[RMDB]
An RNA of 207 nucleotides, treated with DMS and 2A3 and read out base by base. For 2A3 the reverse transcriptase was SuperScript II with manganese. Conditions: 150 mM KOAc, 10 mM MgCl2 and 150 mM bicine (pH 8.5), 24 C. Values cover nucleotides 27 to 156. For 2A3, 3,677 sequencing reads were counted. It was measured as part of the RMDB library RNAMAK.
RNA sequence: GGGAACGACUCGAGUAGAGUCGAAAAUCUCAUUUCGAUGAGAGUGACGCGUACUACGCAGAGAGGUGACGGGAGUCACUCCUCCCAAAUAGGAGGAAGUGACGAGGAUCGUCACUCCCCACCUCUGCGUAUCGCUAUAUAAUGGCUUCGGCCAUAACGUACGGAUAAUGUUCGCAUUAUCCGUACGAAAAGAAACAACAACAACAAC
Reactivity to DMS in 0.01 (KOAc 150mM, MgCl2 10mM, bicine 150mM(pH8.5), 24C), signal-to-noise 2, nucleotides 027 to 156: u010c020u000c010a050u010u000u000c190g030a050u000g000a030g020a080g030u000g000a180c160g020c040g040u000a070c130u000a030c020g000c030a040g010a010g000a300g020g020u000g000a060c020g050g020g000a170g010u000c000a020c000u000c010c020u020c010c000c010a030a240a200u020a050g020g030a030g000g010a020a070g070u000g000a040c000g010a090g030g020a090u000c020g030u010c020a000c010u000c110c100c030c080a300c160c000u000c000u000g010c000g020u000a010u000c010g000c010u000a120u000a160u000a020a020u000g000g020c050u010u010c240g030g010c000c000a000u000a020a060
Reactivity to 2A3 in 0.01 (KOAc 150mM, MgCl2 10mM, bicine 150mM(pH8.5), 24C), signal-to-noise 4, nucleotides 027 to 156: u010c010u000c010a050u070u180u100c250g170a070u050g010a010g030a030g070u160g080a110c110g030c000g030u120a110c040u010a000c030g000c000a000g000a000g010a020g010g030u000g000a000c010g010g010g000a030g010u000c000a010c000u000c010c000u000c000c000c010a190a300a070u250a060g000g000a010g000g010a190a060g000u000g000a000c000g010a080g000g030a020u020c000g010u010c000a000c000u010c020c000c010c000a070c010c000u000c000u000g000c000g010u010a000u050c010g000c010u000a000u010a020u020a130a100u000g000g010c010u020u040c200g130g000c010c000a010u060a100a020